[RMDB]
RNA sequence: GGGAACGACUCGAGUAGAGUCGAAAAGGGUGAUGUCUCCUAACCUUUAUCAACGGGGGCACUCGGUCGUGCUGUGGGUAGAAAUUUUAUUUCGUGCCUACCUUAGACGCUUGUCGUCGGGAGUAUGUGGGACUGAUGAACUUCGGUUCAUCAGUAACUUGGGUAGAUUGUUCGCAAUCUACCCAAGAAAAGAAACAACAACAACAAC
Reactivity to DMS in 0.01 (KOAc 150mM, MgCl2 10mM, bicine 150mM(pH8.5), 24C), signal-to-noise 1, nucleotides 027 to 156: g000g000g040u020g010a130u010g000u010c010u000c020c010u010a250a110c080c030u000u000u000a140u020c100a080a120c220g030g030g030g000g000c040a010c070u000c010g050g000u000c020g030u010g010c040u010g010u020g020g000g000u050a240g000a010a040a060u000u010u010u010a160u040u020u000c030g020u000g000c020c010u000a030c030c070u000u000a060g010a060c020g030c040u000u000g000u000c010g010u000c000g010g000g000a090g010u010a060u000g000u030g030g000g000a130c020u000g000a030u000g010a000a030c000u000u000c300g060g000u000u000c040a010u020c000a000g010u000a000a130
Reactivity to 2A3 in 0.01 (KOAc 150mM, MgCl2 10mM, bicine 150mM(pH8.5), 24C), signal-to-noise 3, nucleotides 027 to 156: g060g020g010u080g020a140u060g030u050c000u030c020c020u030a130a150c050c000u120u100u150a300u190c050a070a090c090g000g000g000g000g000c010a010c010u020c010g070g000u020c020g040u050g060c060u070g010u030g010g030g000u010a010g140a020a040a020u190u290u170u190a120u060u030u100c070g070u190g000c010c000u000a030c000c000u050u080a050g010a010c000g010c050u130u300g090u300c030g030u010c040g020g030g000a030g020u120a110u200g050u120g000g040g020a000c000u000g000a000u010g000a000a000c010u040u010c120g070g000u000u000c000a000u000c000a000g000u000a000a030